[RMDB]
This 177-nucleotide RNA was probed chemically with DMS and 2A3. The reactions ran in a buffer of 150 mM KOAc, 10 mM MgCl2 and 150 mM bicine (pH 8.5), at 24 C.
RNA sequence: GGGAACGACUCGAGUAGAGUCGAAAAGGGGAGCAUCAAAGAGUUGUGAUGUUAUCUGAUACAAUCUUCCUAAAUAAACACUCUGCAUUUCCUGCUUGCGGAAGCUGAGCUUUGUUCCGCGAGUCUCACAUGCGUGCUAAUUCGUUAGCACGCAUGUAAAAGAAACAACAACAACAAC
Reactivity to DMS in 0.01 (KOAc 150mM, MgCl2 10mM, bicine 150mM(pH8.5), 24C), signal-to-noise 4, nucleotides 027 to 126: g000g000g010g020a070g020c050a070u010c080a080a110a070g000a090g020u010u010g030u000g010a090u010g000u010u020a070u030c050u000g020a170u020a090c200a080a110u020c120u010u010c020c020u010a040a080a050u020a100a070a170c030a020c010u000c000u010g020c040a060u020u000u000c010c010u000g000c000u000u010g000c000g000g000a030a040g000c070u010g010a130g020c130u020u030u020g010u010u000c000c000g000c000g000a010g020u010c080u010c140
Reactivity to 2A3 in 0.01 (KOAc 150mM, MgCl2 10mM, bicine 150mM(pH8.5), 24C), signal-to-noise 8, nucleotides 027 to 126: g060g010g010g010a010g010c000a010u020c020a030a130a020g120a040g050u110u150g050u040g030a040u020g010u040u060a110u060c040u040g030a050u040a150c070a090a120u030c040u050u040c010c020u080a090a080a070u120a010a070a000c010a000c010u020c000u010g000c010a030u020u020u030c000c000u000g010c000u010u010g000c000g000g010a030a050g050c080u100g070a040g080c010u200u170u110g080u040u010c000c000g000c020g000a000g010u000c060u020c050